[RMDB]
RNA sequence: GGGAACGACUCGAGUAGAGUCGAAAAGACUUGGUACUUCUCAACAACAGAAACAAACACCAUUUCCAACCUUCCCAUCACACGCGAUGAAUGUGAAGAAGCAAUCACAACAUAUGAAAUGGGUGAAAGAGUCCACGUGGUUCGCCACGUGGACUCUAAAAGAAACAACAACAACAAC
Reactivity to 2A3 in 0.01 (KOAc 150mM, MgCl2 10mM, bicine 150mM(pH8.5), 24C), signal-to-noise 1, nucleotides 027 to 126: g060a000c080u080u080g000g080u120a060c000u080u150c000u170c000a130a300c100a030a010c000a000g020a300a110a000c120a000a300a000c100a000c000c000a040u000u000u000c000c080a130a130c080c010u000u150c000c000c000a000u000c000a120c000a000c060g290c170g300a230u120g000a150a000u000g000u000g050a120a000g000a060a060g020c120a000a000u060c080a000c100a300a000c000a120u190a190u000g000a000a100a000u000g000g000g000u000g110a260a000